[RMDB]
RNA sequence: GGGAACGACUCGAGUAGAGUCGAAAAAGGGUGGGGGAUCUCGCCAAUCCCUAUUACCCGCAAGGCGUAAUGCGGGCACCAGUAACUCCUACCCUAUGGUGUCUCCUAUCUGUAGGUCCCAGUGGAGACUUGUCUGACUCUUCGGAGUCAGACAAGUAAAAGAAACAACAACAACAAC
Reactivity to DMS in 0.01 (KOAc 150mM, MgCl2 10mM, bicine 150mM(pH8.5), 24C), signal-to-noise 2, nucleotides 027 to 126: a110g000g000g050u010g010g000g010g010g000a000u000c000u010c040g000c010c060a300a010u010c000c000c000u000a080u000u010a020c000c000c000g000c030a070a040g000g030c030g010u020a060a030u030g000c000g020g000g020c000a010c010c040a120g000u040a090a130c070u010c010c000u020a130c040c000c020u000a050u010g020g010u000g000u010c090u050c070c040u000a110u020c060u000g010u000a050g010g000u010c020c020c010a130g030u010g000g000a070g000
Reactivity to 2A3 in 0.01 (KOAc 150mM, MgCl2 10mM, bicine 150mM(pH8.5), 24C), signal-to-noise 4, nucleotides 027 to 126: a000g080g000g010u000g000g010g010g000g000a000u000c000u010c000g000c000c000a000a000u010c010c010c010u090a200u140u250a030c000c030c010g000c010a050a260g040g000c050g210u240a080a040u100g000c000g000g000g000c000a000c000c000a000g030u040a040a030c020u000c000c000u060a050c000c000c010u040a050u110g010g030u040g060u010c050u030c040c050u120a130u100c010u020g080u030a030g030g030u030c010c000c000a010g060u030g040g010a060g000
Source information:
An RNA of 177 nucleotides, treated with DMS and 2A3 and read out base by base. It was measured as part of the RMDB libraries RFM100 and RFMREP. For 2A3 the reverse transcriptase was SuperScript II with manganese. DMS adducts were read by reverse transcription with MarathonRT.